RNA sequence: GGGAACGACUCGAGUAGAGUCGAAAACUAUGCCUACAUGAACAUUAGGCUGCCGGCCGCUAACCUGGUAGAUACUUUUGUCAAUGUGGGUGCUCGCUGGUCUCCUGAUGUAAUGGAUACUGUCAACCCUUUCAAUCAUCACAGAAAUGCCGGACUGUAUGCAAUCAUGUUUCGACAUGAUUGCAUAAAAAGAAACAACAACAACAAC
Reactivity to 2A3 in 0.01 (KOAc 150mM, MgCl2 10mM, bicine 150mM(pH8.5), 24C), signal-to-noise 6, nucleotides 027 to 156: c060u080a080u260g010c010c000u040a020c020a050u090g040a180a000c000a010u040u030a020g020g010c000u010g000c000c010g020g010c030c040g100c260u100a060a060c010c020u040g030g010u030a020g020a050u300a300c020u040u070u040u060g020u030c050a120a100u040g010u020g020g000g000u030g010c040u070c050g030c040u060g020g040u030c030u010c020c020u040g040a070u070g060u120a100a040u070g030g000a020u050a120c050u090g080u110c050a030a120c030c000c000u040u110u090c050a080a070u070c040a020u060c020a030c010a070g120a120a130a040u100g030c050c020g050g050a050c030u090g040
Reactivity to DMS in 0.01 (KOAc 150mM, MgCl2 10mM, bicine 150mM(pH8.5), 24C), signal-to-noise 2, nucleotides 027 to 156: c060u010a070u010g010c000c000u000a000c030a030u010g000a060a080c020a060u000u010a000g010g020c000u000g020c000c010g000g040c020c070g020c300u010a100a030c030c010u000g070g030u000a050g010a110u000a110c030u000u000u000u000g000u030c050a090a070u010g010u000g010g030g060u000g020c030u010c080g000c030u000g010g010u000c010u000c020c020u030g010a100u000g020u010a070a060u000g010g000a070u010a040c090u000g000u000c060a050a100c030c030c030u000u000u000c030a060a160u000c050a010u000c020a100c070a050g020a070a100a070u000g010c050c030g010g010a130c050u000g030